[RMDB]
RNA sequence: GGGAACGACUCGAGUAGAGUCGAAAAGCAUUCCACUUCGGUGGAAUGCAAAUGCCGGCUGCAUGAAAAGUGCUUCAAAGAGUGGGAGCACUGCCGAAGAAAAAAGUUCCAUGUUCGCAUGGAACAACCAAUUAGUCCACUUCGGUGGACUAAUUGGAAAAGAAACAACAACAACAAC
Reactivity to 2A3 in 0.01 (KOAc 150mM, MgCl2 10mM, bicine 150mM(pH8.5), 24C), signal-to-noise 3, nucleotides 027 to 126: g000c010a000u000u020c000c000a000c000u030u070c180g110g010u010g010g000a010a000u000g000c010a000a030a030u070g040c010c010g010g000c020u060g030c040a150u120g130a030a030a050a040g000u000g020c000u010u000c050a150a190a100g150a080g130u170g040g020g000a000g000c000a010c020u000g000c010c010g080a130a100g090a050a130a010a020a000a000g000u000u000c000c000a000u020g050u040u070c210g000c090a010u010g000g000a000a000c000a000a000
Reactivity to DMS in 0.01 (KOAc 150mM, MgCl2 10mM, bicine 150mM(pH8.5), 24C), signal-to-noise 2, nucleotides 027 to 126: g010c010a000u000u000c010c000a020c000u000u010c180g030g020u010g000g000a010a010u000g000c000a010a010a050u000g020c060c020g020g000c030u010g000c090a060u020g000a110a050a130a080g010u000g010c000u010u000c050a100a060a210g000a210g000u030g010g010g000a010g000c000a010c010u000g040c080c030g020a070a110g010a030a030a020a130a160a050g000u000u000c000c000a000u000g000u000u000c210g020c000a000u000g010g010a000a020c030a010a050